[RMDB]
Notes:
The data come from the RNA Mapping Database (RMDB), libraries RFM100 and RFMREP. Structure probing data (DMS and 2A3) for a 177-nucleotide construct. For 2A3, 26,850 sequencing reads were counted.
RNA sequence: GGGAACGACUCGAGUAGAGUCGAAAAGUAACAUCCGUCCUAACGGCGACAGACUGCACGGCCCUGCCUCUUAGGUGUGUUCAAUGAACAGUCGUUCCGAAAGGAAGCAUCCGGUAUCCCAAGACAAGGCUAAAUGUAUAUUCGUAUACAUUUAGCCAAAAGAAACAACAACAACAAC
Reactivity to DMS in 0.01 (KOAc 150mM, MgCl2 10mM, bicine 150mM(pH8.5), 24C), signal-to-noise 9, nucleotides 027 to 126: g010u020a080a100c130a100u010c030c020g000u000c050c050u010a070a200c080g010g000c120g000a070c090a090g010a080c060u000g010c070a080c090g010g000c050c020c010u000g010c040c020u010c090u010u010a060g020g020u010g010u010g000u010u010c040a110a090u020g010a060a090c090a040g000u000c010g010u000u000c000c000g010a060a120a100g010g000a070a070g000c060a060u010c070c020g010g000u000a080u010c000c000c000a090a120g000a100c230a090a120
Reactivity to 2A3 in 0.01 (KOAc 150mM, MgCl2 10mM, bicine 150mM(pH8.5), 24C), signal-to-noise 9, nucleotides 027 to 126: g060u050a060a040c020a110u030c020c020g040u040c020c040u060a100a050c030g030g020c020g030a020c020a060g060a030c020u040g020c060a030c060g040g000c020c010c010u040g020c010c020u080c040u060u160a050g040g000u050g020u020g020u050u040c090a150a150u170g030a080a020c010a030g020u020c010g020u050u010c010c000g040a060a050a010g040g020a040a010g050c010a030u040c010c010g010g010u030a060u020c000c000c000a030a010g070a060c090a080a070